[RMDB]
RNA sequence: GGGAACGACUCGAGUAGAGUCGAAAAAUAAUUCUCUUGGCUCUAGUGGCUUAAUCUUAUCAUGCAGGGGAUUUUUGUUUAAUGGAAAAGCAUGACUAUCUAGGUGAUUGAAUCCAACAAUAUGCUGCCUCAACUUAUUUUUCGAAAUAAGUUGAGGAAAAGAAACAACAACAACAAC
Reactivity to DMS in 0.01 (KOAc 150mM, MgCl2 10mM, bicine 150mM(pH8.5), 24C), signal-to-noise 4, nucleotides 027 to 126: a080u020a100a160u000u000c010u000c010u000u000g020g010c020u000c060u000a110g020u010g010g010c050u000u000a070a050u000c050u000u010a080u000c050a040u010g020c000a140g000g000g000g000a060u010u010u000u000u000g010u000u010u000a060a090u000g010g010a060a080a040a070g020c020a040u010g010a070c060u010a040u000c040u010a120g020g010u000g010a070u000u000g000a100a080u000c020c030a050a060c140a050a080u010a050u010g010c100u010g010
Reactivity to 2A3 in 0.01 (KOAc 150mM, MgCl2 10mM, bicine 150mM(pH8.5), 24C), signal-to-noise 2, nucleotides 027 to 126: a000u100a000a070u070u010c000u000c000u020u070g030g030c000u000c030u060a100g040u080g120g000c000u020u070a040a030u020c010u020u070a040u090c010a030u040g000c020a040g000g030g010g120a030u050u080u050u080u060g070u040u120u140a100a070u070g000g040a090a030a020a000g000c020a010u030g020a060c010u020a040u060c030u060a090g240g000u070g070a040u040u070g050a070a040u030c030c010a000a020c010a040a050u180a110u200g040c030u040g010